This 177-nucleotide RNA was probed chemically with 2A3. Source: RMDB library 15KREP, as collected in RNAgym. Conditions: 150 mM KOAc, 10 mM MgCl2 and 150 mM bicine (pH 8.5), 24 C. For 2A3, 917 sequencing reads were counted.
RNA sequence: GGGAACGACUCGAGUAGAGUCGAAAAUCUGCAAUCUUAUGCCUGCUGGACUCAUUCCUGCGGUUAUGAUUAUGUCUACAACCCUUUCUUUGUCGAUGUUCAACAGUGGGGUUAUGUAGGCAAUCUUGUCAUUGGUAUGGUUCGCCAUACCAAUGACAAAAGAAACAACAACAACAAC
Reactivity to 2A3 in 0.01 (KOAc 150mM, MgCl2 10mM, bicine 150mM(pH8.5), 24C), signal-to-noise 1, nucleotides 027 to 126: u080c020u080g020c040a040a090u000c000u050u090a040u090g000c000c010u090g000c020u060g000g010a050c030u000c220a110u180u050c000c000u000g000c010g020g030u090u110a060u060g020a000u020u050a040u180g000u030c000u000a000c000a030a010c010c010c000u040u170u040c050u050u130u040g060u000c060g300a220u260g070u170u140c000a000a030c000a080g010u000g030g000g000g000u020u030a070u080g010u020a000g020g010c010a000a000u040c020u000u030